[RMDB]
RNA sequence: GGGAACGACUCGAGUAGAGUCGAAAAUUGUACACCUUCGGGUGUACAAGCUGUCUAGUCGCUAGCAAACGAUCAAAGCUAGCGACUUGACUUUAUUGAUCGCGACGUGCGCUUUCGAGCGCACGAACCGUGGAUAGAUGUUCGCAUCUAUCCACGGAAAAGAAACAACAACAACAAC
Reactivity to DMS in 0.01 (KOAc 150mM, MgCl2 10mM, bicine 150mM(pH8.5), 24C), signal-to-noise 2, nucleotides 027 to 126: u000u000g000u000a000c000a000c000c000u000u000c190g060g010g000u010g020u000a000c000a000a030g020c150u010g020u010c020u000a020g010u000c010g030c000u000a020g000c000a040a090a100c110g020a060u010c090a050a160a160g000c000u000a000g020c000g000a010c010u000u000g010a010c070u000u000u000a070u000u000g000a040u010c040g000c240g000a190c030g000u000g010c000g010c010u000u000u010c180g000a030g000c020g010c000a000c000g010a010a040
Reactivity to 2A3 in 0.01 (KOAc 150mM, MgCl2 10mM, bicine 150mM(pH8.5), 24C), signal-to-noise 2, nucleotides 027 to 126: u000u010g000u000a000c000a010c010c010u030u040c300g130g000g000u000g000u000a000c000a000a000g020c020u050g010u000c000u020a000g000u000c010g000c000u010a000g010c010a110a070a110c130g140a110u140c090a120a050a060g000c000u010a000g060c000g000a000c000u000u000g000a000c000u010u060u010a080u010u130g180a090u110c060g000c060g130a100c020g060u020g000c020g020c000u060u020u080c260g090a000g000c030g000c000a000c000g000a000a010

The record gives the reactivity of an RNA of 177 nucleotides to DMS and 2A3. Values cover nucleotides 27 to 126. For DMS, 1,772 sequencing reads were counted. The reactions ran in a buffer of 150 mM KOAc, 10 mM MgCl2 and 150 mM bicine (pH 8.5), at 24 C. DMS adducts were read by reverse transcription with MarathonRT.